Structure probing data (DMS and 2A3) for a 207-nucleotide construct. The DMS profile rests on 2,689 reads. The 2A3 profile rests on 1,654 reads. For 2A3 the reverse transcriptase was SuperScript II with manganese. Values cover nucleotides 27 to 156. It was measured as part of the RMDB library OK3TST.
[RMDB]
RNA sequence: GGGAACGACUCGAGUAGAGUCGAAAAAAAACCGGGAAUGUGGCUUCGUAGUCGUCCCUCGCCUGAGAGGAUUGCCUACGCUCAGCACAUAAGUAGCAGGGGCUUCUUGUGACCAGUUUCCACUCAUGGAGAGUUUCUAGCUGUGCUUAUUAAAAAGCAUAUGUACCGAGUUCGCUCGGUACAUAUGAAAAGAAACAACAACAACAAC
Reactivity to DMS in 0.01 (KOAc 150mM, MgCl2 10mM, bicine 150mM(pH8.5), 24C), signal-to-noise 1, nucleotides 027 to 156: a110a020a110a070c000c010g020g020g010a090a060u000g010u000g020g000c040u000u020c010g020u000a040g000u000c040g020u010c010c000c000u010c010g020c170c110u030g020a070g010a140g010g000a100u000u010g060c060c000u000a040c070g000c060u000c070a070g000c060a060c030a030u000a080a130g010u000a110g030c020a090g020g020g040g030c010u020u020c020u000u010g020u000g010a110c050c030a070g020u000u000u000c050c000a230c300u000c040a070u010g000g000a120g020a110g020u000u000u000c050u000a040g010c050u000g010u000g020c000u000u020a080u000u000a060a060a060a110a090g020
Reactivity to 2A3 in 0.01 (KOAc 150mM, MgCl2 10mM, bicine 150mM(pH8.5), 24C), signal-to-noise 3, nucleotides 027 to 156: a000a000a000a010c090c020g010g040g020a130a040u070g030u060g110g030c010u100u080c070g020u040a020g010u010c020g010u000c020c040c010u000c020g230c070c170u250g020a040g000a050g090g010a040u100u300g020c000c000u020a030c020g010c020u070c060a000g030c030a010c010a030u090a040a040g100u080a010g020c050a030g060g000g020g000c020u070u030c020u120u040g030u050g040a070c010c020a050g000u010u060u070c030c010a030c020u060c020a040u140g010g040a050g010a000g030u040u070u040c060u060a060g000c020u030g060u080g040c030u100u070a110u090u230a160a130a080a000a000g000